[RMDB]
Conditions: 150 mM KOAc, 10 mM MgCl2 and 150 mM bicine (pH 8.5), 24 C. This 177-nucleotide RNA was probed chemically with DMS and 2A3. For 2A3, 8,985 sequencing reads were counted. High 2A3 reactivity points to a flexible backbone, as in loops and unpaired stretches. Source: RMDB library M2PK50, as collected in RNAgym.
RNA sequence: GGGAACGACUCGAGUAGAGUCGAAAAUACGCUAAGUUCGCUUAGCGUAAAAUAUAUGGGACUAUAUAAAUCCUGAUAGCCGUAGAAGAUCAUGUAUCGGCAAAAUCACCAUCUUCGGAUGGUGAAACAUAAAUCUCUAGUUCGCUAGAGAUUUAUGAAAAGAAACAACAACAACAAC
Reactivity to DMS in 0.01 (KOAc 150mM, MgCl2 10mM, bicine 150mM(pH8.5), 24C), signal-to-noise 6, nucleotides 027 to 126: u000a000c000g010c000u000a000a010g010u010u010c240g020c000u000u000a010g010c000g010u000a010a020a090a080u000a040u000a050u010g010g010g010a120c110u000a050u010a070u000a070a120a170u000c000c000u000g000a170u010a130g000c000c010g000u000a180g010a100a120g010a080u010c130a060u000g010u000a110u010c010g010g020c030a060a060a090a130u000c000a000c000c000a010u000c000u000u010c190g010g000a000u000g000g010u000g000a000a030a100
Reactivity to 2A3 in 0.01 (KOAc 150mM, MgCl2 10mM, bicine 150mM(pH8.5), 24C), signal-to-noise 5, nucleotides 027 to 126: u040a000c000g000c000u000a010a000g020u020u050c100g060c120u000u010a000g000c000g000u000a000a000a000a000u080a000u010a080u060g040g000g060a020c070u020a020u030a020u060a300a150a050u020c000c000u030g050a090u090a060g000c010c030g010u030a030g040a270a030g030a120u130c050a070u200g040u120a050u100c010g000g000c010a010a040a000a080u010c000a000c000c000a000u000c000u030u040c190g100g000a000u000g000g000u000g000a000a000a000